[RMDB]
RNA sequence: GGGAACGACUCGAGUAGAGUCGAAAAAUAAAUAGUGCGUGGACGCACCCACGCAUUCAUGCGUAGGCAGUUGUUCGCAUUAGUACAGCUUAGCCUGUACUAAGCGAACAACAAGUUCAACAAAAAAGUCAUUUGUUAUGUUCGCAUAACAAAUGACAAAAGAAACAACAACAACAAC
Reactivity to 2A3 in 0.01 (KOAc 150mM, MgCl2 10mM, bicine 150mM(pH8.5), 24C), signal-to-noise 2, nucleotides 027 to 126: a000u210a000a040a060u160a030g010u010g010c000g030u010g010g030a080c110g020c120a080c000c000c000a000c000g000c020a000u030u020c030a020u080g060c040g050u050a100g080g000c070a020g020u000u000g000u000u000c040g000c130a240u040u020a010g000u000a000c010a010g000c000u160u090a030g040c030c010u020g000u010a000c000u000a010a010g010c000g000a000a010c000a000a000c000a020a000g010u030u080c090a080a060c030a020a090a000a050a000a040
Reactivity to DMS in 0.01 (KOAc 150mM, MgCl2 10mM, bicine 150mM(pH8.5), 24C), signal-to-noise 3, nucleotides 027 to 126: a100u010a080a090a090u000a030g040u000g010c030g020u000g000g020a100c200g030c210a120c090c010c010a020c010g000c000a010u000u000c210a050u010g010c120g030u000a090g000g020c070a120g000u000u000g000u000u010c000g010c010a100u000u000a010g000u000a000c000a020g000c020u010u020a090g010c150c000u000g000u010a000c000u010a000a010g000c000g000a000a000c000a010a000c000a020a060g020u000u000c070a030a050c060a010a040a080a100a070a080